[RMDB]
RNA sequence: GGGAACGACUCGAGUAGAGUCGAAAAUAGAACGUGUGGAUUGGGAUAUAGAGUAUCCUUAUAUCUCACAUGAAAAGAAAUUGAAUUCCUGUUGUAGAAUCGUUGAGCGCAACGUCGUACGUGCUGCCACUAAUGUAGGCUUCGGCCUACAUUAGUGAAAAGAAACAACAACAACAAC
Reactivity to DMS in 0.01 (KOAc 150mM, MgCl2 10mM, bicine 150mM(pH8.5), 24C), signal-to-noise 2, nucleotides 027 to 126: u020a100g000a090a150c030g020u000g040u000g010g010a010u000u000g000g000g000a020u000a030u000a140g010a190g000u000a000u000c000c010u000u000a030u000a090u000c000u000c000a000c010a020u000g000a080a080a120a090g000a060a040a100u000u000g020a100a250u000u000c000c000u000g000u000u000g010u000a080g020a070a080u000c110g010u000u000g010a100g010c050g010c010a040a050c040g030u010c180g000u000a190c090g010u000g000c060u010g010c090